[RMDB]
Background:
Structure probing data (2A3 and DMS) for a 177-nucleotide construct. It was measured as part of the RMDB library OK2TST.
RNA sequence: GGGAACGACUCGAGUAGAGUCGAAAAGAAGAAAGGGGAAGGGAUCACGAAUGACAAAUGCCAAAGGAGUUGGUACGACCCGCGAGAGAAACCCGCGUUGGCUUCCAUAGCCGCCACAGAAACUCUCCUAACGAUAACAGUUCGCUGUUAUCGUUAGAAAAGAAACAACAACAACAAC
Reactivity to 2A3 in 0.01 (KOAc 150mM, MgCl2 10mM, bicine 150mM(pH8.5), 24C), signal-to-noise 2, nucleotides 027 to 126: g040a060a000g050a040a090a010g020g000g000g030a020a040g030g010g020a030u050c020a010c090g090a100a070u130g020a020c050a030a110a020u080g020c010c030a040a040a030g120g000a180g200u100u040g070g020u040a070c040g040a050c030c020c040g000c010g020a040g010a010g030a070a170a070c020c050c000g040c010g030u110u100g020g000c000u090u010c100c010a050u130a040g000c030c000g020c020c000a030c010a020g050a050a040a030c030u030c000u000c030
Reactivity to DMS in 0.01 (KOAc 150mM, MgCl2 10mM, bicine 150mM(pH8.5), 24C), signal-to-noise 5, nucleotides 027 to 126: g000a120a090g000a060a100a110g000g000g020g010a080a070g010g000g010a110u010c070a050c110g000a070a090u010g000a070c090a090a110a080u000g000c030c040a040a080a130g010g020a130g020u000u000g010g020u000a080c110g000a110c060c060c030g020c150g000a030g010a070g010a060a080a070c060c030c030g010c110g010u000u010g020g020c000u000u000c140c110a080u010a060g000c020c050g010c050c060a070c140a060g000a070a060a110c030u000c030u000c040
The 2A3 profile rests on 2,295 reads.
For DMS the reverse transcriptase was MarathonRT.